[RMDB]
This 177-nucleotide RNA was probed chemically with 2A3 and DMS. The RNA was probed in 150 mM KOAc, 10 mM MgCl2 and 150 mM bicine (pH 8.5) at 24 C.
RNA sequence: GGGAACGACUCGAGUAGAGUCGAAAAGUUGGCGGAGACCGAAUCUACAAGGAUGAAUGUCUCAAACCAUUAAAGCGAAGCAUGCCGGUAUCUACCUCCAACCCCUGCUGUGCAGAGAGUGGUGUCGCCCGAAUGGUGAAUUCGUUCACCAUUCGGGAAAAGAAACAACAACAACAAC
Reactivity to 2A3 in 0.01 (KOAc 150mM, MgCl2 10mM, bicine 150mM(pH8.5), 24C), signal-to-noise 3, nucleotides 027 to 126: g070u000u060g090g000c110g110g000a000g010a020c020c030g030a010a040u050c040u040a280c110a270a100g150g010a010u040g030a190a020u110g060u020c000u020c000a090a110a070c030c010a070u180u090a130a110a040g060c050g080a060a010g030c010a010u100g040c000c000g020g000u000a080u060c030u050a130c020c000u020c010c030a010a070c000c020c000c000u010g020c040u040g010u040g070c000a020g030a010g050a060g140u080g010g070u070g030u030c050g020
Reactivity to DMS in 0.01 (KOAc 150mM, MgCl2 10mM, bicine 150mM(pH8.5), 24C), signal-to-noise 2, nucleotides 027 to 126: g000u020u000g000g010c250g000g000a030g000a030c010c020g020a080a010u010c010u020a100c300a190a110g000g000a020u000g010a200a070u030g000u000c000u020c020a130a080a140c030c010a060u010u040a030a070a080g000c050g010a030a040g030c070a100u010g030c070c000g020g000u000a030u010c060u010a170c030c000u000c040c030a050a120c100c000c000c030u000g010c030u000g020u050g020c030a090g000a060g000a110g000u010g000g030u000g000u020c090g000
In probing experiments dimethyl sulfate is read out at A N1 and C N3, which are open when not base-paired. For 2A3 the reverse transcriptase was SuperScript II with manganese. The data come from the RNA Mapping Database (RMDB), library OK1LIB. The 2A3 profile rests on 1,164 reads. The DMS profile rests on 2,618 reads.